[RMDB]
RNA sequence: GGGAACGACUCGAGUAGAGUCGAAAAGGUAUUUGCCUAGGUGCUCAGGCACUGACUUGUUAUUACGGUGGAGAAGUCAUUAAAGGCGACAAGGUUAUGCACGGAAAAGUUGAUACACUAAAGGUUAUAACGCCAAGAAGUUCGCUUCUUGGCGUUAAAAAGAAACAACAACAACAAC
Reactivity to DMS in 0.01 (KOAc 150mM, MgCl2 10mM, bicine 150mM(pH8.5), 24C), signal-to-noise 2, nucleotides 027 to 126: g050g000u020a060u020u010u000g040c020c040u000a190g000g010u000g010c060u000c230a110g020g010c020a040c030u010g000a110c080u000u010g000u000u020a070u000u020a090c070g040g030u000g020g000a080g000a070a050g030u000c040a030u000u020a070a110a110g000g020c010g030a070c130a040a080g000g010u000u000a090u000g000c050a040c060g000g020a070a060a080a080g020u010u010g060a090u000a070c100a070c080u000a060a080a080g010g010u000u010a130